[RMDB]
RNA sequence: GGGAACGACUCGAGUAGAGUCGAAAAGACUAGCUGUGAAUCUCCAGCAGAGGGACUAGUGGUUAGAGGAGACCCCCCGGAAAACGCAAAACAGCAUAUUGACGUGGGAAAGACCAGAGACUCCAUGCCUGUGGCUAAAGUUCGCUUUAGCCACAGGAAAAGAAACAACAACAACAAC
Reactivity to DMS in 0.01 (KOAc 150mM, MgCl2 10mM, bicine 150mM(pH8.5), 24C), signal-to-noise 3, nucleotides 027 to 126: g010a150c010u010a050g000c010u000g000u020g000a130a070u020c080u000c010c010a200g000c120a100g000a110g010g040g000a060c040u000a070g000u010g010g000u000u000a070g000a090g010g010a080g000a160c020c020c010c000c050c040g010g000a080a040a090a060c150g010c040a020a040a060a050c240a110g000c050a050u060a110u010u020g000a140c060g000u000g010g010g000a150a040a090g000a060c050c050a000g000a030g010a060c050u020c010c070a060u010g000
Reactivity to 2A3 in 0.01 (KOAc 150mM, MgCl2 10mM, bicine 150mM(pH8.5), 24C), signal-to-noise 5, nucleotides 027 to 126: g060a010c030u040a010g010c040u020g020u040g160a100a090u050c010u010c030c010a020g100c070a010g100a140g050g040g020a040c030u060a060g050u010g090g020u050u050a070g020a040g070g010a050g020a060c000c000c000c000c000c020g010g050a080a070a030a030c070g000c060a070a140a010a110c050a050g080c020a020u040a130u100u160g060a050c010g030u040g020g030g020a090a180a050g020a040c020c010a010g020a010g020a100c010u000c030c000a000u080g030